[RMDB]
RNA sequence: GGGAACGACUCGAGUAGAGUCGAAAAUGCCAGGGGGACGGUAGCAGCUGCACCCACGUGACGGGCAACUAUCGCAAGGGGAAUGCCCACCUUGGUAAGCCACAGCGCGCCCUGGAGUCCAAGCACAGUCAAUGGGCACAUUCGUGUGCCCAUUGACAAAAGAAACAACAACAACAAC
Reactivity to DMS in 0.01 (KOAc 150mM, MgCl2 10mM, bicine 150mM(pH8.5), 24C), signal-to-noise 1, nucleotides 027 to 126: u020g000c020c030a080g050g040g000g000g000a210c120g030g000u020a030g060c070a100g020c040u000g000c300a100c250c060c000a080c300g030u010g040a100c100g030g000g000c000a110a100c020u000a000u000c050g000c110a100a110g010g000g000g000a140a090u000g000c020c030c000a110c040c020u000u000g030g000u000a040a050g040c070c020a070c250a130g000c000g000c070g000c050c020c000u000g000g000a090g000u000c060c020a050a080g000c270a010c240a090